[RMDB]
RNA sequence: GGGAACGACUCGAGUAGAGUCGAAAAGGAAAGCGCGCGAAUUGGAAACCAGGGCGCCAUAUUACGCGCGCAAGGAAUUGGGCCUUGGUUUUUUGGAAGGAUUAGAUAAUUACCCCGCGCCCGUCAAUCUAUAUCAAUAUUUCGAUAUUGAUAUAGAAAAAGAAACAACAACAACAAC
Reactivity to 2A3 in 0.01 (KOAc 150mM, MgCl2 10mM, bicine 150mM(pH8.5), 24C), signal-to-noise 1, nucleotides 027 to 126: g010g000a190a130a020g000c020g000c010g000c020g040a040a030u260u160g070g010a060a020a040c040c000a050g030g000g010c080g000c020c010a030u140a050u150u100a080c060g000c010g000c000g000c070a000a020g050g030a050a040u090u090g000g010g000c030c030u000u020g000g000u050u000u000u000u020u030g040g010a090a050g050g000a020u050u100a080g030a100u110a160a070u140u110a150c010c010c020c000g020c020g000c000c000c010g030u030c000a010a080
Reactivity to DMS in 0.01 (KOAc 150mM, MgCl2 10mM, bicine 150mM(pH8.5), 24C), signal-to-noise 4, nucleotides 027 to 126: g010g010a120a170a180g000c030g010c000g040c030g010a100a110u000u000g010g000a080a030a050c040c040a030g000g000g000c050g010c030c020a030u010a040u000u000a100c030g010c040g020c030g010c020a050a040g010g010a090a070u000u010g000g010g000c000c020u000u000g010g010u000u000u000u000u010u000g010g020a110a060g000g000a090u000u000a080g000a090u000a070a060u000u000a130c030c010c030c020g010c120g000c010c010c020g020u010c070a050a110